[RMDB]
RNA sequence: GGGAACGACUCGAGUAGAGUCGAAAACGAGGUGCGGUAGGCCUCGUUAACAAACCGCAAAAAAAUAGUCGCAAACGACGAAAACUACGCACUCGCAGCUUAAUAACCUGCGCUGAGCCCUUAUCCCAAAACUGAGGUAGGUUCGCCUACCUCAGAAUCAAUCGAAACUGUUCGCAGUUUCGAUUGAAAAAGAAACAACAACAACAAC
Reactivity to 2A3 in 0.01 (KOAc 150mM, MgCl2 10mM, bicine 150mM(pH8.5), 24C), signal-to-noise 3, nucleotides 027 to 156: c010g000a010g000g020u060g050c080g020g070u040a030g060g040c000c000u010c010g030u010u020a010a000c020a000a070a020c000c030g010c050a100a130a020a010a000a000a090u170a030g010u010c020g030c110a100a110a210c070g060a000c000g050a030a030a020a030c070u130a010c030g010c030a050c020u050c030g000c010a010g000c010u070u050a030a020u040a080a040c010c010u010g020c020g010c090u050g060a040g000c000c020c040u040u080a070u080c030c020c000a030a080a030a100c010u000g000a000g000g000u010a010g010g050u040u080c120g060c040c000u000a010c000c000u000c000a000g000a000a000
Reactivity to DMS in 0.01 (KOAc 150mM, MgCl2 10mM, bicine 150mM(pH8.5), 24C), signal-to-noise 1, nucleotides 027 to 156: c020g030a060g030g040u000g020c040g000g000u000a210g030g020c000c020u000c010g000u000u000a010a080c000a130a100a140c030c030g000c050a000a000a060a160a020a160a250u000a060g000u000c000g050c040a080a050a080c020g000a050c020g000a080a080a140a060c050u050a010c010g020c040a150c090u000c020g010c070a010g000c030u000u000a100a130u000a100a120c300c000u000g040c000g030c080u020g000a100g000c000c060c040u000u000a150u090c000c000c000a070a040a090a170c010u000g000a010g000g030u000a000g000g030u000u000c300g070c020c000u000a000c000c000u000c000a000g010a020a110
Structure probing data (2A3 and DMS) for a 207-nucleotide construct. Source: RMDB library M2RFPK, as collected in RNAgym. For 2A3, 1,900 sequencing reads were counted.